[RMDB]
RNA sequence: GGGAACGACUCGAGUAGAGUCGAAAAACGGAUAGAUUCGUCUAUCCGUGCAUCUCAUAACAGACAGAGAAAGUCUGCUUAGAUCUCACUUAGAUAAAGAGAAGAGAGUCGAGUUCGCUCGACUCAACAUUCCCACAAUUUUCGAAUUGUGGGAAUGAAAAGAAACAACAACAACAAC
Reactivity to 2A3 in 0.01 (KOAc 150mM, MgCl2 10mM, bicine 150mM(pH8.5), 24C), signal-to-noise 7, nucleotides 027 to 126: a000c010g010g010a000u000a010g020a010u020u050c170g030u020c110u000a000u010c000c000g000u000g000c010a080u000c010u000c010a040u060a110a040c010a000g030a000c000a010g220a010g140a300a190a020g030u010c000u010g010c020u090u070a070g020a210u030c010u010c020a100c070u100u140a040g050a180u180a250a190a020g040a010g010a090a040g120a020g000a000g060u000c010g000a000g000u020u050c130g050c050u000c010g000a000c000u000c000a000a010
Reactivity to DMS in 0.01 (KOAc 150mM, MgCl2 10mM, bicine 150mM(pH8.5), 24C), signal-to-noise 7, nucleotides 027 to 126: a020c000g010g000a010u000a000g000a020u000u010c170g010u000c000u000a000u000c000c000g000u000g000c180a110u000c020u000c050a110u010a070a090c010a010g010a020c010a060g010a200g010a120a150a080g010u000c000u000g010c120u000u000a090g000a070u000c020u000c050a090c120u000u000a120g010a110u000a060a090a120g000a050g000a070a110g000a160g000a020g020u000c000g010a020g020u000u010c190g020c000u000c000g010a010c000u000c000a030a130